Source: RMDB library RFMREP, as collected in RNAgym. Chemical mapping of a 177-nucleotide RNA with DMS. The RNA was probed in 150 mM KOAc, 10 mM MgCl2 and 150 mM bicine (pH 8.5) at 24 C. For DMS, 1,067 sequencing reads were counted. Reactivities are rounded to 0.1 and cut off at 0 and 3.
[RMDB]
RNA sequence: GGGAACGACUCGAGUAGAGUCGAAAAUGCACCCGGGUAAGUCCUAUACGGCCAGCUCCCUUCGAAUCCUCCAGGGCUUGAUCGCAGCAAAGGUAGUUGGUUGUAGCGGCGCGAUAUAGUAAGCUUACAGCAUUGUAUACUUCGGUAUACAAUGCUGAAAAGAAACAACAACAACAAC
Reactivity to DMS in 0.01 (KOAc 150mM, MgCl2 10mM, bicine 150mM(pH8.5), 24C), signal-to-noise 1, nucleotides 027 to 126: u020g010c150a200c010c020c020g000g010g000u000a020a020g010u030c070c000u010a170u000a040c020g000g020c010c010a060g040c020u000c090c000c000u000u000c030g010a120a170u000c010c000u000c040c070a230g020g000g010c040u000u010g010a060u000c120g060c070a050g020c080a110a050a010g010g010u000a020g010u000u000g000g000u000u000g000u000a000g040c130g020g010c000g020c030g000a090u000a070u000a070g020u000a060a050g010c070u010u000a180